[RMDB]
RNA sequence: GGGAACGACUCGAGUAGAGUCGAAAACUGCCGCCGGGACGCAGUGAUCCUCGCAGUGUCGCACGGUCGCCUCGGGUCGGCCUCGUGUCGGCUCGACCUGCGAGGGGAGCGAGUGGCGAGCCCGACCAAAACUUUCUCGCCUUCGGGCGAGAAAGAACUGUCCUAGUACGUUCGCGUACUAGGACAGAAAAGAAACAACAACAACAAC
Reactivity to 2A3 in 0.01 (KOAc 150mM, MgCl2 10mM, bicine 150mM(pH8.5), 24C), signal-to-noise 2, nucleotides 027 to 156: c030u030g000c000c010g010c000c040g180g020g090a080c030g000c020a130g300u000g000a010u010c000c010u010c000g010c010a050g010u040g040u190c040g020c050a090c100g050g000u010c030g000c010c030u030c010g020g000g000u030c010g020g000c000c000u140c090g240u300g030u040c020g000g000c050u010c030g000a020c010c000u000g000c010g000a010g000g000g000g000a000g000c000g000a070g120u090g000g000c010g000a060g000c040c040c020g020a040c020c020a050a040a020a030c000u000u010u000c000u000c000g010c010c000u040u100c140g120g000g000c000g000a000g000a000a000a010g000a000a010